The record gives the reactivity of an RNA of 177 nucleotides to DMS and 2A3. For 2A3 the reverse transcriptase was SuperScript II with manganese. For DMS, 1,111 sequencing reads were counted.

RNA sequence: GGGAACGACUCGAGUAGAGUCGAAAAGGUACGUUCUCUCAAAUUGAGUGAUAAUAAUUGUUAUCUUAAUGCAGUUAUUAUGACACUUGAUUUAUUGAAGGACAUUAAAUUUGUUAUACCUGCUCUACAUUCAACGAGUGUUCGCACUCGUUGAAUGAAAAGAAACAACAACAACAAC
Reactivity to DMS in 0.01 (KOAc 150mM, MgCl2 10mM, bicine 150mM(pH8.5), 24C), signal-to-noise 1, nucleotides 027 to 126: g010g010u000a050c230g040u010u010c000u000c050u020c130a020a010a030u000u000g020a020g000u000g010a090u000a000a000u000a010a010u010u000g000u000u000a110u000c300u000u020a090a130u020g000c000a030g010u000u000a000u000u000a000u000g000a210c020a010c010u000u000g020a000u000u000u000a080u010u000g010a070a080g000g020a030c010a080u020u010a050a070a120u010u010u000g020u010u010a160u000a030c010c000u000g010c050u000c010u000a180
Reactivity to 2A3 in 0.01 (KOAc 150mM, MgCl2 10mM, bicine 150mM(pH8.5), 24C), signal-to-noise 1, nucleotides 027 to 126: g010g000u030a040c030g020u010u000c000u000c000u000c020a000a000a000u010u000g010a010g030u000g000a000u020a010a000u000a010a000u050u000g010u030u170a040u140c050u050u300a060a040u150g000c000a000g020u000u000a010u000u000a000u020g090a070c010a000c030u030u010g010a000u010u010u090a150u020u090g000a010a030g010g030a010c020a000u060u230a080a160a100u160u240u060g080u140u050a100u030a040c010c020u010g020c000u000c010u000a020
Background
For 2A3, 781 sequencing reads were counted.